[RMDB]
RNA sequence: GGGAACGACUCGAGUAGAGUCGAAAAAACGGUGUCUCUGAGUCCUUGAUGAACCGGCGAGGGAAAUCAAUCUGGCCGAGAUAUCGUUUCAGUCGUUCUUUGUUUUGGUUUACGAUCUGAUUGUUGCCAUACAUUCUAACUUCGGUUAGAAUGUAUGAAAAGAAACAACAACAACAAC
Reactivity to DMS in 0.01 (KOAc 150mM, MgCl2 10mM, bicine 150mM(pH8.5), 24C), signal-to-noise 7, nucleotides 027 to 126: a010a010c010g010g020u000g020u010c000u000c010u010g020a140g030u010c010c230u000u000g010a030u000g010a300a300c010c010g000g040c250g010a300g000g010g000a050a130a030u000c020a010a030u010c200u010g010g010c010c020g010a010g000a010u000a010u000c000g010u000u000u000c110a060g010u000c010g010u000u000c010u000u000u010g010u000u010u000u000g010g000u000u000u000a080c090g010a050u000c080u000g010a100u000u000g010u000u010g000c090
Reactivity to 2A3 in 0.01 (KOAc 150mM, MgCl2 10mM, bicine 150mM(pH8.5), 24C), signal-to-noise 3, nucleotides 027 to 126: a000a000c020g000g000u010g020u010c010u010c020u020g040a040g130u050c020c000u020u010g010a010u010g010a090a050c000c010g060g050c230g110a140g000g020g030a030a020a020u020c000a020a020u050c110u150g010g000c010c010g000a010g000a000u020a010u020c010g000u000u020u020c000a000g000u020c030g010u010u030c000u090u080u120g190u070u140u050u100g160g010u070u120u120a060c090g000a080u050c080u120g060a280u050u080g030u050u040g000c010